[RMDB]
RNA sequence: GGGAACGACUCGAGUAGAGUCGAAAAUCAAACGAUUUCGAUCGUUUGAAACGGACCACUCCUGCGGGAGUUAAGGCCAUACGGACAGCGGGGUCCACUGCCAGUCAUUCGGUUUCGACCGAAUGAAUACCCUUUUUGAUUUCGAUCAAAAAGGGUAAAAAGAAACAACAACAACAAC
Reactivity to DMS in 0.01 (KOAc 150mM, MgCl2 10mM, bicine 150mM(pH8.5), 24C), signal-to-noise 5, nucleotides 027 to 126: u000c000a000a000a010c000g000a010u000u000u000c170g010a020u010c000g010u000u000u000g000a010a110a110c140g000g010a040c010c010a160c010u000c000c000u010g020c160g030g010g010a020g000u010u000a040a060g020g010c030c050a100u010a110c140g010g010a040c030a050g010c050g010g010g000g010u000c010c020a120c070u010g000c020c040a160g000u000c000a010u010u000c000g010g000u000u000u000c190g000a020c000c010g000a010a000u000g000a040a120
Reactivity to 2A3 in 0.01 (KOAc 150mM, MgCl2 10mM, bicine 150mM(pH8.5), 24C), signal-to-noise 4, nucleotides 027 to 126: u020c000a000a010a000c000g010a010u040u050u190c210g100a010u010c000g000u000u000u010g000a020a010a010c070g020g020a020c010c000a040c020u020c000c010u060g030c260g070g010g000a020g000u020u120a070a030g100g000c020c010a050u090a130c090g040g030a030c020a020g030c050g000g120g000g010u000c000c010a000c030u020g030c010c000a040g100u030c000a000u000u000c000g000g040u020u050u120c180g100a030c000c000g000a000a000u000g000a010a020
This 177-nucleotide RNA was probed chemically with DMS and 2A3. 2A3 adducts were read by reverse transcription with SuperScript II with manganese. It was measured as part of the RMDB library M2PK50. For DMS the reverse transcriptase was MarathonRT. The RNA was probed in 150 mM KOAc, 10 mM MgCl2 and 150 mM bicine (pH 8.5) at 24 C.